[RMDB]
RNA sequence: GGGAACGACUCGAGUAGAGUCGAAAAGUUCGUUUCGACGAACCCAAAGGGGUCUCCAACAGCGUCCACCAAAGCCGAAGAACCUGAAGCCUCCACGGGGGAGGCUUAGUAGGACGACAUGGAGACGGAGGCACCCAGCACCAGCUUUCGAGCUGAAGUCCUUUAUUAAAUUCGUUUAAUAAAGGACAAAAGAAACAACAACAACAAC
Reactivity to 2A3 in 0.01 (KOAc 150mM, MgCl2 10mM, bicine 150mM(pH8.5), 24C), signal-to-noise 4, nucleotides 027 to 156: g000u010u010c010g000u010u060u140c130g060a030c000g010a020a020c000c020c020a070a050a030g070g000g010g000u020c010u010c010c010a050a030c040a100g080c010g000u000c010c010a060c030c030a170a040a020g020c010c000g200a250a050g030a050a080c010c010u060g060a110a030g110c050c060u050c070c040a040c040g020g010g000g000g010a030g010g000c010u000u000a000g010u020a060g000g000a010c000g050a070c010a080u100g000g020a050g010a040c010g000g000a010g000g020c020a200c030c000c010a020g030c050a070c080c000a010g050c010u120u130u250c270g070a010g000c000u020g030a060a000
Reactivity to DMS in 0.01 (KOAc 150mM, MgCl2 10mM, bicine 150mM(pH8.5), 24C), signal-to-noise 2, nucleotides 027 to 156: g000u000u000c020g030u010u000u000c120g000a030c000g000a030a030c020c040c030a040a160a180g000g000g090g020u010c000u000c010c010a100a110c050a160g000c010g000u010c010c030a090c050c000a040a110a070g000c000c000g020a180a240g000a130a210c000c000u000g010a070a060g010c010c000u000c000c040a290c070g050g010g040g000g040a070g030g040c000u000u000a000g010u010a180g080g000a050c000g000a060c050a210u000g010g000a090g000a010c000g000g020a040g020g000c000a190c030c000c030a300g000c040a130c100c010a030g010c010u010u000u010c200g030a080g010c000u000g000a090a130
An RNA of 207 nucleotides, treated with 2A3 and DMS and read out base by base. For 2A3 the reverse transcriptase was SuperScript II with manganese. The RNA was probed in 150 mM KOAc, 10 mM MgCl2 and 150 mM bicine (pH 8.5) at 24 C. For DMS, 3,062 sequencing reads were counted.